Structure probing data (DMS and 2A3) for a 177-nucleotide construct. It was measured as part of the RMDB library OK2TST. For DMS the reverse transcriptase was MarathonRT. As a SHAPE reagent, 2A3 marks flexible, mostly unpaired nucleotides at the ribose 2'-OH. The reactions ran in a buffer of 150 mM KOAc, 10 mM MgCl2 and 150 mM bicine (pH 8.5), at 24 C. 2A3 adducts were read by reverse transcription with SuperScript II with manganese.
[RMDB]
RNA sequence: GGGAACGACUCGAGUAGAGUCGAAAAGGUCUCUAUUGCUAGGCUGUCGCAGCCUGUGUACUAUCAAGCUCAGGAUACUUUUCUUGCUGCAUUUCCUUGUGAUGAGCUGAAGAUUUCUUACACUCUAGACUCUGAGGUAAUUCGUUACCUCAGAGUCAAAAGAAACAACAACAACAAC
Reactivity to DMS in 0.01 (KOAc 150mM, MgCl2 10mM, bicine 150mM(pH8.5), 24C), signal-to-noise 3, nucleotides 027 to 126: g010g000u010c010u000c050u000a060u000u000g030c040u010a040g000g010c060u020g010u020c160g030c050a030g010c010c020u000g000u010g020u000a070c210u020a060u000c110a090a060g020c020u000c060a040g020g010a080u010a070c080u000u000u010u000c060u000u030g020c060u000g010c050a110u000u000u000c010c000u010u020g010u000g010a050u010g000a030g010c060u010g000a070a120g000a180u000u000u010c050u010u010a120c140a070c080u000c070u000a260
Reactivity to 2A3 in 0.01 (KOAc 150mM, MgCl2 10mM, bicine 150mM(pH8.5), 24C), signal-to-noise 1, nucleotides 027 to 126: g030g040u040c010u000c030u160a030u060u060g030c000u040a020g040g000c020u060g080u230c150g000c110a010g010c020c020u010g020u000g010u030a080c070u070a070u130c030a130a000g020c000u000c050a020g070g000a090u140a220c000u040u140u070u050c040u050u100g070c010u030g000c010a060u020u050u090c000c000u050u040g070u000g040a060u010g010a000g070c040u000g050a030a060g020a090u010u010u020c000u000u040a030c090a020c010u020c040u030a040